[RMDB]
Structure probing data (2A3 and DMS) for a 177-nucleotide construct.
RNA sequence: GGGAACGACUCGAGUAGAGUCGAAAAGUGGGCGCCACCCCAGAGCUGGCACAAGCUGCGAUCGAGUUCAUGGGGCUUGAGCAGUGGGCAGACACGCACCCCUUAGAUGUUCCGGCCGCGUGGCGACCUGGGACAUUACAUUCGUGUAAUGUCCCAGAAAAGAAACAACAACAACAAC
Reactivity to 2A3 in 0.01 (KOAc 150mM, MgCl2 10mM, bicine 150mM(pH8.5), 24C), signal-to-noise 2, nucleotides 027 to 126: g090u060g010g030g000c020g010c020c000a020c030c000c020c010a020g020a030g060c010u010g020g000c040a010c010a030a020g000c000u020g000c000g110a100u030c020g010a040g050u050u070c070a160u300g110g040g040g000c030u040u060g010a010g010c040a020g010u090g000g030g000c050a040g030a150c030a000c120g080c020a120c000c020c010c030u050u150a080g010a100u070g020u050u000c010c000g020g000c000c020g040c050g020u030g000g010c010g030a070c010
Reactivity to DMS in 0.01 (KOAc 150mM, MgCl2 10mM, bicine 150mM(pH8.5), 24C), signal-to-noise 4, nucleotides 027 to 126: g030u010g000g010g000c030g000c010c030a030c010c050c030c090a190g020a120g020c010u010g000g010c090a070c070a080a130g010c040u000g000c010g000a120u000c030g010a030g010u000u000c050a160u000g020g020g000g000c030u000u000g000a110g000c020a050g010u010g000g010g020c100a120g010a130c150a070c170g000c100a180c030c010c000c030u000u000a070g020a080u000g000u000u000c010c000g010g010c020c040g020c200g020u000g000g000c010g000a050c040

The reactions ran in a buffer of 150 mM KOAc, 10 mM MgCl2 and 150 mM bicine (pH 8.5), at 24 C. It was measured as part of the RMDB library OK2TST.